Source: RMDB library M2PK90, as collected in RNAgym. An RNA of 177 nucleotides, treated with DMS and read out base by base.
[RMDB]
RNA sequence: GGGAACGACUCGAGUAGAGUCGAAAAGUAAACAGGUUGAGUAGAGUGUGAGCCGCUGCGAUACCAGCUCGAUUACGAGCCCUUGGCAGCGCGUCGGAAGGACGGGUCGCUGAAUAUAAAAAAGUAAGUAAACCCUAGAUUUCGAUCUAGGGUUUACAAAAGAAACAACAACAACAAC
Reactivity to DMS in 0.01 (KOAc 150mM, MgCl2 10mM, bicine 150mM(pH8.5), 24C), signal-to-noise 3, nucleotides 027 to 126: g000u010a070a070a150c120a130g010g000u000u010g000a070g020u000a060g000a100g000u000g020u000g010a100g000c090c020g010c000u000g000c020g000a110u000a050c070c130a190g010c000u020c030g020a260u000u000a100c040g030a050g010c000c040c050u000u000g000g000c020a030g010c010g010c070g030u010c030g000g020a120a090g010g000a090c070g000g010g030u000c030g000c050u000g000a050a020u020a070u020a000a070a040a030a050a090g010u020a080a120

For DMS, 1,961 sequencing reads were counted.